[RMDB]
RNA sequence: GGGAACGACUCGAGUAGAGUCGAAAAUAUACAUCAGAAGUCGGCACAACUCCCGACUCGCGGUGAGCGAUGCAGCGUAGCGCGAGCUACGCAGCUGCUGUGCGGAUGGCUAGCCGAGGCUAGCCUAACCAUGGUGGCUAUUCGUAGCCACCAUGGUAAAAGAAACAACAACAACAAC
Reactivity to DMS in 0.01 (KOAc 150mM, MgCl2 10mM, bicine 150mM(pH8.5), 24C), signal-to-noise 3, nucleotides 027 to 126: u080a130u040a190c060a060u000c060a100g000a140a040g010u000c000g010g010c210a050c100a050a090c250u020c090c000c000g000a050c020u000c020g000c300g000g010u020g010a100g010c020g000a050u020g000c010a030g010c010g000u000a020g000c010g030c300g000a170g010c000u000a000c000g050c010a000g030c040u000g000c030u020g010u020g020c080g020g000a110u020g000g000c010u000a020g020c000c060g030a100g070g000c000u000a030g000c000c000u010a020
Reactivity to 2A3 in 0.01 (KOAc 150mM, MgCl2 10mM, bicine 150mM(pH8.5), 24C), signal-to-noise 2, nucleotides 027 to 126: u160a000u040a030c050a050u120c010a000g040a140a060g090u000c000g050g040c120a050c050a300a300c100u040c000c000c000g040a030c010u010c000g010c030g000g000u100g020a000g000c030g080a120u160g050c030a010g010c000g000u010a000g010c000g020c020g020a030g000c000u000a000c000g000c000a010g000c000u030g000c020u020g010u090g040c020g060g020a130u100g000g000c000u000a000g000c020c040g070a120g070g000c000u000a010g000c000c000u010a030

Structure probing data (DMS and 2A3) for a 177-nucleotide construct. It was measured as part of the RMDB library OK1LIB. For DMS the reverse transcriptase was MarathonRT. The DMS profile rests on 4,068 reads. Values cover nucleotides 27 to 126. Reactivities are rounded to 0.1 and cut off at 0 and 3. The 2A3 profile rests on 2,400 reads.